[RMDB]
RNA sequence: GGGAACGACUCGAGUAGAGUCGAAAAGGGCAAACGACAAAGUCGACCGAAAGUCGUAUUCAGGAUAUGCAUUCCUGAUGGCUGGAAGUGCAUUUUCAUGGGGCUCAUCAAAGCAGAGCGUCAUCGACAGGUCCACUGAUUUCGAUCAGUGGACCUGAAAAGAAACAACAACAACAAC
Reactivity to 2A3 in 0.01 (KOAc 150mM, MgCl2 10mM, bicine 150mM(pH8.5), 24C), signal-to-noise 1, nucleotides 027 to 126: g060g000g010c100a150a050a010c060g020a020c010a010a240a030g010u070c040g020a120c000c000g110a050a000a010g010u010c000g000u030a100u020u070c020a010g090g000a030u050a050u150g120c040a040u080u000c020c030u030g020a090u060g060g060c080u030g030g050a040a000g100u050g080c050a030u080u010u020u130c020a030u060g060g000g010g010c010u000c050a060u060c000a090a130a050g010c060a000g020a010g060c050g300u060c010a040u000c020g060a070
Reactivity to DMS in 0.01 (KOAc 150mM, MgCl2 10mM, bicine 150mM(pH8.5), 24C), signal-to-noise 1, nucleotides 027 to 126: g010g000g040c040a060a170a070c050g030a060c060a020a060a180g000u000c020g000a050c060c010g010a200a100a130g000u000c050g000u000a080u000u000c040a030g140g010a040u000a050u000g000c250a060u000u000c000c000u000g000a060u000g000g000c050u000g020g000a220a040g030u000g010c070a060u020u010u020u000c030a060u030g010g000g000g000c040u000c040a080u000c120a100a050a170g010c160a070g000a050g000c030g040u010c040a030u000c050g000a150